[RMDB]
RNA sequence: GGGAACGACUCGAGUAGAGUCGAAAAGAUAUGGACUUAUGACAGACAUGCGAGACCCUCGGAAACGAGGGUAUCGCAACAGCUGUAUAAGUCCUAAGUCAAAUCUGUGACGUUCGCGUCACAGAAACUUAAGAGUCGUGUUCGCACGACUCUUAAGAAAAGAAACAACAACAACAAC
Reactivity to 2A3 in 0.01 (KOAc 150mM, MgCl2 10mM, bicine 150mM(pH8.5), 24C), signal-to-noise 1, nucleotides 027 to 126: g010a000u050a040u060g000g000a000c000u040u000a000u130g300a030c030a020g020a030c070a260u300g000c000g000a010g010a020c000c000c000u020c000g000g000a000a000a000c010g000a000g020g000g000u020a000u000c000g050c010a040a010c040a000g060c000u000g000u000a010u000a010a020g010u020c000c000u010a010a000g030u000c000a070a000a240u000c000u020g020u020g000a000c000g030u080u080c300g030c060g140u000c000a000c020a000g000a000a010a010
Reactivity to DMS in 0.01 (KOAc 150mM, MgCl2 10mM, bicine 150mM(pH8.5), 24C), signal-to-noise 1, nucleotides 027 to 126: g000a010u000a100u010g010g000a020c000u010u000a010u000g030a020c000a010g010a030c180a080u010g020c000g000a000g010a030c000c000c000u000c000g030g000a030a010a040c000g020a000g000g000g040u000a000u000c010g000c000a020a040c200a200g000c000u000g000u000a000u000a000a000g020u000c000c000u000a000a080g000u000c010a100a150a200u000c010u000g000u010g000a020c010g050u000u030c270g030c030g000u000c000a000c010a000g020a020a050a110